[RMDB]
RNA sequence: GGGAACGACUCGAGUAGAGUCGAAAAUGAAAUAAAGCGUACGAAGAUGGACGUACGCAACCAGUGCGAACAGGAAUCGCACAUCCAGCGCUCUAAGGUGAGCGCAAAACCUAAUAAUAGAAAAAAACAUUAUAUGGGUGUUCGCACCCAUAUAAUGAAAAGAAACAACAACAACAAC
Reactivity to DMS in 0.01 (KOAc 150mM, MgCl2 10mM, bicine 150mM(pH8.5), 24C), signal-to-noise 2, nucleotides 027 to 126: u020g000a120a180a100u000a090a080a070g000c000g010u010a000c000g020a140a110g020a140u010g000g040a230c000g010u000a010c010g030c040a030a020c080c100a100g030u000g020c020g000a030a070c140a090g050g000a140a040u000c000g020c000a020c000a090u000c080c120a130g040c000g020c000u000c000u000a080a170g010g010u000g030a010g000c040g030c000a010a000a070a040c060c050u020a020a080u010a090a170u030a230g000a020a020a040a070a100a020a200
Reactivity to 2A3 in 0.01 (KOAc 150mM, MgCl2 10mM, bicine 150mM(pH8.5), 24C), signal-to-noise 2, nucleotides 027 to 126: u030g010a000a040a070u140a040a020a010g000c000g010u020a000c020g050a070a120g110a150u140g060g020a010c020g010u000a000c000g000c010a000a010c010c020a010g000u000g010c010g000a050a010c050a160g050g190a100a080u000c000g020c010a000c000a010u030c050c030a040g000c020g000c000u030c020u020a150a030g290g050u080g050a010g020c000g000c000a020a000a020a020c030c000u070a120a060u200a210a040u190a260g090a040a150a010a010a010a010a000
The record gives the reactivity of an RNA of 177 nucleotides to DMS and 2A3. High 2A3 reactivity points to a flexible backbone, as in loops and unpaired stretches. The 2A3 profile rests on 2,242 reads. Source: RMDB library M2PK90, as collected in RNAgym.